[RMDB]
RNA sequence: GGGAACGACUCGAGUAGAGUCGAAAAAAUGUUUUAAUCCUGUAUGGGAAAGGGAUAAAAUGUUUUAAUCCUGUAUGGGAAAGGGAUAAAAUGUUUUAAUCCUGUAUGGGAAAGGGCCUGUAUGGGAAAGGGAUAAAAAUGUUUACUCCUUUUACUCGCACAUCUAACUCUUCGGAGUUAGAUGUGCAAAAGAAACAACAACAACAAC
Reactivity to 2A3 in 0.01 (KOAc 150mM, MgCl2 10mM, bicine 150mM(pH8.5), 24C), signal-to-noise 1, nucleotides 027 to 156: a000a010u080g000u000u040u000u010a050a050u040c000c000u030g110u140a060u080g030g000g000a010a030a120g050g010g000a010u040a020a060a000a030u040g010u010u050u030u010a070a100u000c000c000u000g060u070a170u100g100g000g010a050a100a040g030g020g030a000u110a070a010a000a020u030g010u000u050u020u010a060a150u030c000c000u000g000u020a070u040g040g000g040a000a100a170g070g010g020c000c010u070g000u050a030u050g010g010g090a170a000a000g010g030g010a020u160a090a090a010a010a010u100g000u060u060u060a060c070u040c000c000u070u050u030u120a120c080u070c070